[RMDB]
RNA sequence: GGGAACGACUCGAGUAGAGUCGAAAACGGUGGAAACAACUGAAGCUUCAACGCCUUUUUUUCCUAUCUUCUUUAGCACCGGGCUAGGGAGUAAGCCCGUGGAACCUUAGUUUUGUUCCCUCGGGACUUACUUGUGGUUCCUGUGGUGCACUCCUGAGAAGGAACCAUUGUUCGCAAUGGUUCCUUCAAAAGAAACAACAACAACAAC
Reactivity to 2A3 in 0.01 (KOAc 150mM, MgCl2 10mM, bicine 150mM(pH8.5), 24C), signal-to-noise 2, nucleotides 027 to 156: c000g030g020u030g000g080a080a060a010c020a040a070c050u120g120a230a000g100c030u110u080c170a150a080c060g030c020c000u060u020u040u000u000u080u020c000c000u060a090u060c040u230u040c000u070u110u060a000g000c030a010c120c110g000g070g000c000u040a020g090g070g030a000g010u010a020a000g030c000c000c010g000u040g000g030a050a000c010c000u080u030a040g050u100u260u100u130g040u050u020c010c010c010u050c050g030g020g050a060c000u010u000a000c000u020u020g040u030g060g000u070u170c000c030u050g080u200g040g030u050g000c010a010c020u080c000c040u070g020a020